[RMDB]
RNA sequence: GGGAACGACUCGAGUAGAGUCGAAAACUGCCGUGCAUGCCUCUAACAACGCAGCCACCACGGUCAAGAAGAGCUCCGCGGAAGUGUCUUCAUCGUCUUCGUCGUCUUCUCCGGCGUCAGGGGUGUAGAUAAUGACGACUUUCGAGUCGUCAUUAUCAAAAGAAACAACAACAACAAC
Reactivity to 2A3 in 0.01 (KOAc 150mM, MgCl2 10mM, bicine 150mM(pH8.5), 24C), signal-to-noise 9, nucleotides 027 to 126: c010u030g010c010c020g030u040g010c020a050u090g030c000c010u060c020u100a150a090c070a050a030c090g030c050a030g020c020c010a050c020c010a020c030g030g030u070c060a040a030g050a040a010g020a050g020c010u020c020c020g040c030g050g020a080a050g040u050g100u060c020u050u050c020a070u060c020g080u010c020u050u020c020g050u010c010g010u010c020u040u010c030u000c010c010g030g000c020g040u050c030a030g020g030g000g000u040g020u040a040
Reactivity to DMS in 0.01 (KOAc 150mM, MgCl2 10mM, bicine 150mM(pH8.5), 24C), signal-to-noise 4, nucleotides 027 to 126: c040u010g030c020c000g010u020g000c080a080u020g010c030c020u020c040u020a110a110c140a120a110c090g000c060a080g010c030c030a080c090c020a090c050g000g020u010c080a120a120g020a100a070g020a080g010c030u010c050c030g010c040g000g000a100a070g020u010g010u000c020u010u010c050a040u010c040g010u020c000u000u010c040g010u020c030g030u020c010u010u010c030u000c030c030g010g010c030g000u010c020a050g000g000g000g010u000g010u030a090

The record gives the reactivity of an RNA of 177 nucleotides to 2A3 and DMS. Reactivities are given for positions 27 through 126. The data come from the RNA Mapping Database (RMDB), library OK1LIB. Conditions: 150 mM KOAc, 10 mM MgCl2 and 150 mM bicine (pH 8.5), 24 C. Reactivities are rounded to 0.1 and cut off at 0 and 3. For DMS the reverse transcriptase was MarathonRT.